Record summary: This 177-nucleotide RNA was probed chemically with 2A3 and DMS.
[RMDB]
RNA sequence: GGGAACGACUCGAGUAGAGUCGAAAACGCCCGGCACCCGAUCAUCAUGUUGGCCGAACACGUCGCCGACACGUUCAUCGCGAUGGGAUGGGAACUGGCCGAGGGGCCCGAGGUGGAGACCGAGCAGAAUACUGACACCUUUCGAGGUGUCAGUAUUAAAAGAAACAACAACAACAAC
Reactivity to 2A3 in 0.01 (KOAc 150mM, MgCl2 10mM, bicine 150mM(pH8.5), 24C), signal-to-noise 1, nucleotides 027 to 126: c010g010c040c000c000g070g060c060a150c000c000c000g000a040u040c000a000u000c000a010u120g070u030u050g090g000c040c000g040a080a010c150a020c070g130u130c050g030c070c010g030a000c030a000c110g040u160u110c090a080u120c070g020c060g070a040u040g040g000g000a010u090g010g010g010a070a080c020u100g090g010c000c010g020a170g000g000g000g020c000c020c020g000a050g020g020u050g010g000a030g030a050c010c010g000a020g000c070a070g060
Reactivity to DMS in 0.01 (KOAc 150mM, MgCl2 10mM, bicine 150mM(pH8.5), 24C), signal-to-noise 2, nucleotides 027 to 126: c130g000c020c020c010g000g000c090a120c010c030c020g000a120u010c090a090u000c090a080u010g000u000u000g010g010c020c060g000a090a240c160a090c130g010u000c070g020c010c040g060a050c060a120c120g000u010u010c110a110u000c080g010c140g020a060u000g010g000g010a140u020g000g000g020a120a090c100u010g010g020c020c040g000a150g000g010g010g000c180c050c050g000a060g010g020u000g000g010a050g010a090c040c040g000a100g030c110a130g010
The data come from the RNA Mapping Database (RMDB), library OK2TST. Reactivities are given for positions 27 through 126. The reactions ran in a buffer of 150 mM KOAc, 10 mM MgCl2 and 150 mM bicine (pH 8.5), at 24 C.